Structure probing data (DMS and 2A3) for a 207-nucleotide construct.
The data come from the RNA Mapping Database (RMDB), library OK3TST.
[RMDB]
RNA sequence: GGGAACGACUCGAGUAGAGUCGAAAAACUUCUUCGCUAGGAUCGAUAAUGAAGGUGAAGUCAGACCACUUCUUUAUUGCAAAAUUUUGAUCAUAUAGAUUAUCCAGUGGCACUUUAUCAUUGCUCCACUCUGCGAUGUCAUCCAACGUGGCUAAAAAGAAACAAACCAUUUCGAUGGUUUGUUUCUAAAAGAAACAACAACAACAAC
Reactivity to DMS in 0.01 (KOAc 150mM, MgCl2 10mM, bicine 150mM(pH8.5), 24C), signal-to-noise 1, nucleotides 027 to 156: a040c030u010u000c030u000u030c010g000c060u020a190g010g010a070u000c110g020a040u010a110a100u000g000a110a050g010g030u020g000a050a070g000u000c100a110g010a180c050c010a050c010u010u010c010u000u000u000a010u010u000g010c050a080a080a130a100u000u010u010u010g030a040u020c030a130u020a140u010a220g000a120u010u010a040u010c040c060a070g000u000g010g020c030a040c070u000u000u010a070u010c070a080u030u000g000c050u000c030c000a010c070u000c030u010g000c050g010a100u000g040u000c030a100u010c060c050a060a060c070g030u000g000g000c050u000a040a080a090a140
Reactivity to 2A3 in 0.01 (KOAc 150mM, MgCl2 10mM, bicine 150mM(pH8.5), 24C), signal-to-noise 4, nucleotides 027 to 156: a000c010u030u030c000u050u030c050g000c000u090a080g070g000a100u030c020g010a030u100a140a050u130g100a130a020g050g020u070g060a050a030g070u070c070a040g060a150c030c000a030c020u050u050c000u080u160u050a080u050u110g010c040a040a150a250a270u120u200u160u130g010a040u060c030a010u090a030u040a250g000a040u030u080a020u150c080c010a020g020u000g050g000c040a020c010u000u030u080a080u090c020a030u050u130g000c030u010c000c000a030c030u070c070u040g000c030g020a030u060g030u050c000a030u030c040c010a000a050c110g020u010g030g000c030u080a180a030a000a040
Conditions: 150 mM KOAc, 10 mM MgCl2 and 150 mM bicine (pH 8.5), 24 C.